RNA sequence: GGGAACGACUCGAGUAGAGUCGAAAAGCGGACCCUUCUAUCUGGGGCUUCGGAGUAGCGAUAUAUAUCCUUCCACGAAAACGAUUUCUUUGUCGCAAACCCGCUCCAUAUCGAGUAAAACAGGCGGAUGCUGUCAUAACCGUCGUCUUUGUGGCCGGCUAUCCGUAGUGUUCGCACUACGGAUAGCAAAAGAAACAACAACAACAAC
Reactivity to 2A3 in 0.01 (KOAc 150mM, MgCl2 10mM, bicine 150mM(pH8.5), 24C), signal-to-noise 1, nucleotides 027 to 156: g140c050g050g040a150c000c000c050u080u020c150u150a150u000c050u080g070g020g000g070c050u230u190c090g060g060a160g070u070a030g040c030g050a000u020a000u000a000u020a030u180c030c050u090u000c060c030a060c090g050a060a070a020a020c050g000a010u140u020u000c110u050u150u050g000u000c010g000c040a020a070a290c000c000c000g000c010u070c050c000a020u050a010u170c130g060a040g000u160a000a100a090a040c070a050g040g000c010g010g000a080u150g010c080u080g080u110c010a070u010a060a120c020c040g030u030c000g030u030c000u030u040u080g030u020g020g040c100c090g030

Notes: The record gives the reactivity of an RNA of 207 nucleotides to 2A3. 2A3 adducts were read by reverse transcription with SuperScript II with manganese. The RNA was probed in 150 mM KOAc, 10 mM MgCl2 and 150 mM bicine (pH 8.5) at 24 C.